[RMDB]
RNA sequence: GGGAACGACUCGAGUAGAGUCGAAAAAAUCAGUGUCCGUGGCUCAUUGGUUCGAUAAUAGCGGUAACCCACCAGUACGGAAUAGCGUGCUUAUUGUGGUAAACCUGGGACUUAAUGGUCUGUGACCUAGAACCAGACUGUUCGCAGUCUGGUUCUAAAAAGAAACAACAACAACAAC
Reactivity to 2A3 in 0.01 (KOAc 150mM, MgCl2 10mM, bicine 150mM(pH8.5), 24C), signal-to-noise 2, nucleotides 027 to 126: a010a000u190c070a020g000u040g020u050c000c020g110u050g000g030c060u060c160a020u010u010g000g010u040u020c010g040a070u140a300a070u050a180g090c040g080g030u020a020a020c010c000c000a030c060c010a020g000u010a010c010g010g110a080a150u140a130g210c010g010u020g010c030u080u020a170u230u240g030u010g000g000u000a170a000a000c000c010u030g010g050g000a020c000u110u230a010a020u040g000g020u000c030u090g120u190g000a000c000c000
Reactivity to DMS in 0.01 (KOAc 150mM, MgCl2 10mM, bicine 150mM(pH8.5), 24C), signal-to-noise 2, nucleotides 027 to 126: a040a030u000c050a110g000u020g010u000c010c020g040u020g020g000c050u000c050a070u010u010g000g010u020u000c040g020a060u020a030a110u020a060g010c250g010g010u000a240a070c290c000c000a070c040c300a010g000u000a030c060g020g020a130a110u010a130g000c040g020u000g000c030u010u010a120u010u010g000u000g000g060u010a120a070a050c080c020u010g030g020g000a050c030u000u000a020a020u000g000g010u000c000u020g000u010g020a040c040c060